[RMDB]
RNA sequence: GGGAACGACUCGAGUAGAGUCGAAAAAUCGUUAACCGUGUUGCGCGUCCUUAUUAUUCCGAGGCCUGGCGGGCACUGGAAGAGCAGGUUGCUGCACCAGAAGUGAUUGACGCUGCACUUCGCGAUACUCACCCCAUUACUUCGGUAAUGGGGUGAGAAAAGAAACAACAACAACAAC
Reactivity to 2A3 in 0.01 (KOAc 150mM, MgCl2 10mM, bicine 150mM(pH8.5), 24C), signal-to-noise 1, nucleotides 027 to 126: a000u030c010g010u000u040a010a010c000c030g010u010g020u030u070g010c020g010c010g010u040c020c030u000u090a090u120u090a160u220u050c040c040g090a050g000g040c030c010u030g120g060c090g040g000g000c060a090c050u010g050g020a030a040g030a040g030c010a030g050g040u130u110g090c010u030g000c020a020c000c000a050g050a130a020g080u050g090a050u090u210g030a030c040g050c190u090g020c030a040c040u030u020c050g000c000g000a000u010a100
Reactivity to DMS in 0.01 (KOAc 150mM, MgCl2 10mM, bicine 150mM(pH8.5), 24C), signal-to-noise 1, nucleotides 027 to 126: a050u000c020g000u010u010a050a140c150c070g000u000g010u000u000g030c060g010c020g000u000c010c010u000u000a050u010u000a190u010u000c090c000g000a090g020g010c050c040u000g020g010c120g020g000g010c030a060c010u000g010g000a050a050g010a040g030c120a040g000g000u010u000g010c010u000g020c000a050c070c050a110g010a050a080g010u000g020a120u000u020g000a110c070g050c090u010g000c020a030c000u000u010c070g010c070g000a080u020a160